The record gives the reactivity of an RNA of 177 nucleotides to 2A3 and DMS.
Values cover nucleotides 27 to 126.
The 2A3 profile rests on 1,515 reads.
For DMS, 1,564 sequencing reads were counted.
The data come from the RNA Mapping Database (RMDB), library OK1LIB.
The reactions ran in a buffer of 150 mM KOAc, 10 mM MgCl2 and 150 mM bicine (pH 8.5), at 24 C.
RNA sequence: GGGAACGACUCGAGUAGAGUCGAAAAACGCCGACGGAUGCUAUGAACACGCAGCGCCGUGGUACGACAAAGCGCUCCGGGAGGAGCCGCAGAACGUGCAGAUGCUCGUGCACAAAGCAGAAAACAGACCCACCCAUACUUUCGAGUAUGGGUGGGUAAAAGAAACAACAACAACAAC
Reactivity to 2A3 in 0.01 (KOAc 150mM, MgCl2 10mM, bicine 150mM(pH8.5), 24C), signal-to-noise 2, nucleotides 027 to 126: a000c030g030c010c020g050a010c040g130g020a090u060g040c000u040a030u120g120a060a000c030a010c040g040c080a030g010c010g060c040c080g300u060g050g000u040a020c010g010a000c050a020a140a000g010c050g000c020u000c000c000g110g070g000a110g000g020a000g000c060c070g000c030a000g040a170a000c030g000u020g010c010a000g010a020u120g000c000u040c020g040u020g000c000a010c000a080a110a000g010c020a010g080a060a090a120a000c060a010g130
Reactivity to DMS in 0.01 (KOAc 150mM, MgCl2 10mM, bicine 150mM(pH8.5), 24C), signal-to-noise 2, nucleotides 027 to 126: a170c210g040c000c020g010a060c250g000g050a030u000g010c030u000a010u000g010a040a110c090a050c040g000c280a010g040c020g010c010c030g000u000g000g020u000a020c000g010a060c080a160a060a150g040c000g030c000u000c040c000g000g030g000a190g020g010a010g020c030c000g050c040a140g020a130a160c000g000u010g020c000a040g000a040u000g010c000u000c010g030u040g000c260a050c020a020a090a000g000c000a090g040a180a030a130a060c220a080g000